[RMDB]
RNA sequence: GGGAACGACUCGAGUAGAGUCGAAAAGAGCAAUGCGCGAUUGCUUGUCGUUAAAAUUGUUAUUUCAGUGUAACAUAUAACAUGCGGAAAAACGCUCAAGUCGUGCAGUAACAAUUUGAUAAAUUUUAGUGGUGUGAAUACACCUCACAUGCCUCAAGCCAUUACUAAAUUUCGAUUUAGUAAUGGCAAAAGAAACAACAACAACAAC
Reactivity to DMS in 0.01 (KOAc 150mM, MgCl2 10mM, bicine 150mM(pH8.5), 24C), signal-to-noise 3, nucleotides 027 to 156: g000a060g010c020a100a100u000g010c020g030c040g020a120u010u010g040c040u000u000g010u000c060g000u020u000a040a040a110a150u000u000g010u000u010a020u000u010u000c090a190g020u010g000u010a080a110c060a080u000a140u000a060a080c060a050u010g010c060g000g010a030a060a060a070a040c030g010c160u010c030a040a070g020u000c010g000u010g020c000a200g040u000a090a100c040a040a090u000u010u000g000a130u010a030a060a120u010u000u030u010a130g020u000g040g020u010g010u000g010a140a130u010a070c000a020c020c010u000c070a040c060a030u010g030c010c020u000c020a040a300
Reactivity to 2A3 in 0.01 (KOAc 150mM, MgCl2 10mM, bicine 150mM(pH8.5), 24C), signal-to-noise 6, nucleotides 027 to 156: g030a000g000c030a040a030u010g000c000g010c010g040a040u010u220g040c040u020u020g060u080c010g010u020u030a070a060a100a110u130u040g010u010u020a030u020u140u140c160a150g050u030g020u190a110a040c030a040u100a010u010a100a010c030a030u120g030c060g000g030a080a060a040a000a000c020g010c010u020c040a000a040g110u140c000g000u000g000c010a000g010u020a000a020c020a030a050u050u090u130g050a070u160a180a200a200u090u140u070u080a070g010u040g040g010u010g000u000g040a020a040u160a150c020a030c040c010u040c010a070c010a000u140g090c010c030u100c040a050a000
An RNA of 207 nucleotides, treated with DMS and 2A3 and read out base by base. For DMS, 7,159 sequencing reads were counted. The data come from the RNA Mapping Database (RMDB), library OK3TST. Conditions: 150 mM KOAc, 10 mM MgCl2 and 150 mM bicine (pH 8.5), 24 C. DMS adducts were read by reverse transcription with MarathonRT.